[RMDB]
RNA sequence: GGGAACGACUCGAGUAGAGUCGAAAAGAUACUUUCGCGCGGCGUACGCUGGGAUGGGUCGGUCGCUAGUUUUGCCCGCCAUCUUUCACGUUGCUUCCUGCAUCGAGAAAUCUAUCGGGUAAAUAAACACGGUACAUAUGUUCGCAUAUGUACCGUGAAAAGAAACAACAACAACAAC
Reactivity to DMS in 0.01 (KOAc 150mM, MgCl2 10mM, bicine 150mM(pH8.5), 24C), signal-to-noise 3, nucleotides 027 to 126: g000a120u000a060c110u010u000u000c040g000c090g010c030g010g000c140g020u000a060c110g030c080u010g000g000g010a090u000g010g000g010u000c040g000g010u010c070g030c060u010a060g000u000u000u000u000g020c000c000c010g000c110c050a060u000c090u010u000u000c020a120c010g010u000u000g010c000u000u000c140c160u000g010c010a040u000c000g010a090g010a030a030a020u000c120u000a100u000c020g000g000g000u000a030a020a040u010a080a050a200
Reactivity to 2A3 in 0.01 (KOAc 150mM, MgCl2 10mM, bicine 150mM(pH8.5), 24C), signal-to-noise 2, nucleotides 027 to 126: g030a040u150a100c040u100u080u060c040g000c010g000c020g030g010c050g050u090a040c050g020c040u060g060g000g060a050u050g020g000g070u080c040g030g000u040c030g020c100u040a150g020u070u030u000u110g010c000c000c000g060c040c010a030u000c000u000u020u060c040a030c000g010u000u030g010c000u130u110c050c080u080g000c000a010u040c010g030a030g000a050a060a000u020c020u060a060u080c030g020g040g000u050a070a070a050u160a050a100a010

Structure probing data (DMS and 2A3) for a 177-nucleotide construct. The 2A3 profile rests on 2,895 reads. DMS adducts were read by reverse transcription with MarathonRT. The data come from the RNA Mapping Database (RMDB), library OK2TRN. Values cover nucleotides 27 to 126. 2A3 adducts were read by reverse transcription with SuperScript II with manganese. The DMS profile rests on 3,675 reads.